The record gives the reactivity of an RNA of 177 nucleotides to 2A3 and DMS. DMS adducts were read by reverse transcription with MarathonRT. The data come from the RNA Mapping Database (RMDB), library RFMREP. For 2A3, 4,794 sequencing reads were counted.
RNA sequence: GGGAACGACUCGAGUAGAGUCGAAAAAAGAUCUUUGGUAUUUAAGUGUCAACAUCGAUUUAUUCAUUUAUUGCUGAGCUGACUGUAACUGACUCAGUAACAAAUCUAAUCAUGUAUUGCACUGGAACGAAUAGGUUAUCUUCGGAUAACCUAUUCGAAAAGAAACAACAACAACAAC
Reactivity to 2A3 in 0.01 (KOAc 150mM, MgCl2 10mM, bicine 150mM(pH8.5), 24C), signal-to-noise 5, nucleotides 027 to 126: a010a000g100a040u060c030u060u080u090g060g030u150a110u110u090u050a170a030g010u010g070u090c020a010a000c010a010u060c100g010a010u000u030u090a070u120u110c060a010u000u020u040a030u030u000g010c000u000g000a000g000c000u010g120a190c080u170g110u300a120a030c020u010g210a190c000u000c000a000g000u000a000a010c000a000a020a010u020c030u030a010a000u010c010a000u010g030u040a130u070u090g010c000a000c040u010g040g000a070a030
Reactivity to DMS in 0.01 (KOAc 150mM, MgCl2 10mM, bicine 150mM(pH8.5), 24C), signal-to-noise 4, nucleotides 027 to 126: a080a050g000a060u000c020u000u000u000g010g010u010a070u010u000u010a100a040g010u000g000u020c140a110a030c010a020u000c180g020a020u000u000u010a060u000u010c160a010u000u000u000a050u010u000g020c000u000g000a010g010c020u000g010a130c210u000g010u020a110a110c080u000g000a140c000u000c000a000g010u010a000a000c020a010a010a020u010c140u000a010a020u000c000a010u000g010u000a110u000u000g010c000a010c010u000g010g020a070a160